[RMDB]
RNA sequence: GGGAACGACUCGAGUAGAGUCGAAAAUCGGGUUCGCCCGAGAGACUGGGGUCCAACAGCGCUAGGACGCUUUGAUCUAUACUGAAGCCUCCACGGUAUAGGGAGCGUCGACCUAGCGACAUGGACGGAGGCACCCUUAACCGGCUUUCGAGCCGAAAUACGGUGUAAUGUUCGCAUUACACCGUAUAAAAGAAACAACAACAACAAC
Reactivity to 2A3 in 0.01 (KOAc 150mM, MgCl2 10mM, bicine 150mM(pH8.5), 24C), signal-to-noise 3, nucleotides 027 to 156: u010c020g010g000g040u050u070c240g120c030c000c000g010a020g000a000g020a000c150u090g000g030g000g000u000c030c010a120a040c100a160g020c000g020c000u010a020g000g030a040c010g020c000u300u100u010g000a000u020c000u000a010u000a000c000u010g040a180a060g010c000c000u000c010c010a010c000g030g000u000a000u000a010g020g000g000a020g000c000g010u070c060g030a030c010c000u000a000g000c000g030a010c040a220u260g030g030a010c030g010g000a010g000g030c000a030c020c000c000u020u040a150a110c080c010g000g000c010u180u180u190c300g120a000g000c020c000g040a080a130
Reactivity to DMS in 0.01 (KOAc 150mM, MgCl2 10mM, bicine 150mM(pH8.5), 24C), signal-to-noise 1, nucleotides 027 to 156: u010c010g000g000g050u000u000c300g030c000c000c000g010a000g000a100g000a080c030u010g000g040g030g060u010c000c030a090a090c040a120g030c000g020c010u000a060g040g020a130c020g000c000u000u010u000g000a070u000c020u000a040u000a000c000u000g000a020a100g010c000c000u030c010c010a300c080g030g000u010a010u010a020g000g010g030a010g040c030g010u000c090g010a120c030c010u000a020g020c000g010a070c080a100u000g030g000a030c030g000g060a070g040g010c000a300c020c010c030u000u000a090a200c150c000g020g050c010u000u010u000c190g000a010g000c000c000g000a010a140